[RMDB]
RNA sequence: GGGAACGACUCGAGUAGAGUCGAAAAAGGGACCUACGACAUGUUUUUCUCCCGGAUUGAGCAUCUGUAUUCAGCAAUCAGAGUAGGUACGGUAGUCACUGCUUAUGAGGACUGCUCGGGGCUGGUAAUCACGUCAUAUGUUCGCAUAUGACGUGAUAAAAGAAACAACAACAACAAC
Reactivity to 2A3 in 0.01 (KOAc 150mM, MgCl2 10mM, bicine 150mM(pH8.5), 24C), signal-to-noise 7, nucleotides 027 to 126: a000g100g010g000a040c010c000u020a010c030g100a040c060a110u090g090u010u050u010u040u030c050u050c000c010c000g010g010a080u080u110g060a030g030c040a050u050c050u080g050u100a140u120u190c040a020g010c050a050a090u070c010a020g050a020g080u030a010g010g050u030a030c000g040g050u050a040g030u040c020a030c200u080g050c030u190u110a090u300g040a020g020g030a040c030u010g010c010u010c010g020g000g020g010c020u040g030g080u060a060
Reactivity to DMS in 0.01 (KOAc 150mM, MgCl2 10mM, bicine 150mM(pH8.5), 24C), signal-to-noise 5, nucleotides 027 to 126: a070g000g010g010a050c020c020u030a030c040g010a150c220a090u010g010u000u000u000u000u000c050u010c010c010c010g000g000a090u000u010g000a090g020c060a100u030c050u010g010u020a090u020u020c040a050g000c050a100a100u020c040a040g000a110g000u010a060g000g010u030a060c050g010g010u010a020g000u000c020a080c030u010g010c090u010u020a090u040g010a120g000g000a050c040u000g010c020u000c050g020g010g010g000c040u020g000g010u030a100